[RMDB]
RNA sequence: GGGAACGACUCGAGUAGAGUCGAAAAACGCUAGGAAUGGUUGUAUACCUCUUAGUGUCAUCCCACUGUGUGCUUCAAAUAAACUUCGCGUUGUAAUUCCUGACUUCACCGUCUGGAAUCAGGUAGUAGUACAGUGUAUGUUCGCAUACACUGUACUAAAAGAAACAACAACAACAAC
Reactivity to DMS in 0.01 (KOAc 150mM, MgCl2 10mM, bicine 150mM(pH8.5), 24C), signal-to-noise 4, nucleotides 027 to 126: a020c010g010c000u000a010g010g010a060a090u020g020g020u000u010g000u000a170u000a070c010c000u000c000u000u000a010g010u000g010u010c060a210u010c000c000c000a180c200u000g000u010g010u010g000c030u000u000c060a040a090a090u000a060a070a080c070u000u000c060g010c150g000u000u000g000u000a100a100u000u000c000c000u000g010a010c020u000u000c210a060c220c220g000u000c080u000g010g000a010a010u000c050a070g000g020u000a070g000u000
Reactivity to 2A3 in 0.01 (KOAc 150mM, MgCl2 10mM, bicine 150mM(pH8.5), 24C), signal-to-noise 3, nucleotides 027 to 126: a000c000g000c010u010a010g060g040a150a180u280g070g050u050u110g150u160a080u090a110c010c000u000c000u010u010a010g000u020g020u010c010a070u010c000c080c000a000c020u050g030u020g020u050g100c000u050u070c000a000a090a190u250a070a110a050c030u060u040c060g000c030g210u060u050g040u110a020a050u050u000c000c000u020g010a020c000u020u030c050a050c060c030g030u020c030u020g020g000a020a020u040c000a010g050g040u040a020g060u000
The record gives the reactivity of an RNA of 177 nucleotides to DMS and 2A3.
The data come from the RNA Mapping Database (RMDB), library 15KREP.
The 2A3 profile rests on 2,304 reads.
The RNA was probed in 150 mM KOAc, 10 mM MgCl2 and 150 mM bicine (pH 8.5) at 24 C.
DMS adducts were read by reverse transcription with MarathonRT.